[RMDB]
RNA sequence: GGGAACGACUCGAGUAGAGUCGAAAACUCAUCUCCUGUCUCUUAUAAGGACAUUUGUCAUUGAAUUUAGGUCCCACCUAAAUAAUCCAGGAUGAUCUCAUAAGAUCUUAAAUUAAUUUCAUGUGGAAAGACCCUUAUUCUAAAUAAGGUCCUGAGACGCUUUUAUAGCUUUCGAGCUAUAAAAGCGAAAAGAAACAACAACAACAAC
Reactivity to 2A3 in 0.01 (KOAc 150mM, MgCl2 10mM, bicine 150mM(pH8.5), 24C), signal-to-noise 2, nucleotides 027 to 156: c020u030c020a110u000c040u040c040c040u070g030u020c030u010c010u060u270a050u040a300a060g000g010a010c020a070u120u190u070g120u070c100a100u060u130g050a050a020u000u080u120a050g000g000u010c030c000c000a010c000c000u060a090a060a070u020a050a020u040c040c060a020g130g000a170u100g030a010u030c020u010c080a200u110a300a070g010a010u000c000u030u110a100a150a120u030u040a050a080u060u110u120c050a010u080g020u060g030g000a040a130a120g050a030c030c010c010u020u070a030u010u090c010u070a070a130a160u040a110a000g050g010u000c000c020u030g010a040g020a030

Structure probing data (2A3) for a 207-nucleotide construct. 2A3 adducts were read by reverse transcription with SuperScript II with manganese. The data come from the RNA Mapping Database (RMDB), library OK3TST. Reactivities are rounded to 0.1 and cut off at 0 and 3. The 2A3 profile rests on 722 reads.